[RMDB]
RNA sequence: GGGAACGACUCGAGUAGAGUCGAAAAAAGUCCAUAUGCCCACCUUCGCUGACCCGGGUGGAUGCUUAUACAUGCUAUGGAUGCCUACAUUUGAAAUAAUGUAGAUGCCUAAUACUCUCUCUCAGGGAGAGAGUUUAGAUGCCUCCAAAGGGUAUGCAAUAAUGCCACUGUUCGCAGUGGCAUUAUUAAAAGAAACAACAACAACAAC
Reactivity to 2A3 in 0.01 (KOAc 150mM, MgCl2 10mM, bicine 150mM(pH8.5), 24C), signal-to-noise 1, nucleotides 027 to 156: a000a000g080u020c000c010a040u040a020u080g000c040c030c000a000c000c000u100u170c080g000c020u030g080a070c000c000c030g000g000g000u030g000g000a040u160g050c030u190u080a070u050a150c020a070u130g010c000u060a010u070g000g010a000u030g010c000c000u000a000c010a010u000u000u060g180a140a100a040u150a050a020u020g010u030a000g030a110u150g020c000c000u030a030a000u060a030c000u010c000u000c000u010c010u030c240a160g000g200g000a000g000a010g000a000g000u000u000u000a000g000a000u080g010c000c000u160c000c000a130a060a040g030g000g010u010a050u120g010c000
Reactivity to DMS in 0.01 (KOAc 150mM, MgCl2 10mM, bicine 150mM(pH8.5), 24C), signal-to-noise 1, nucleotides 027 to 156: a000a090g000u000c020c000a040u010a080u010g060c020c010c000a100c010c040u010u000c070g090c080u010g020a080c050c040c110g000g000g020u010g000g010a140u010g000c040u010u010a200u000a050c040a120u000g000c040u010a120u010g010g010a040u010g010c080c000u000a010c020a040u000u000u000g010a170a070a160u010a020a000u000g000u010a000g010a130u000g010c020c020u020a050a070u000a020c000u000c000u000c000u000c010u010c200a300g050g050g020a020g010a030g010a020g030u000u000u000a000g000a200u000g010c020c020u000c070c050a060a120a110g030g000g000u000a020u010g020c070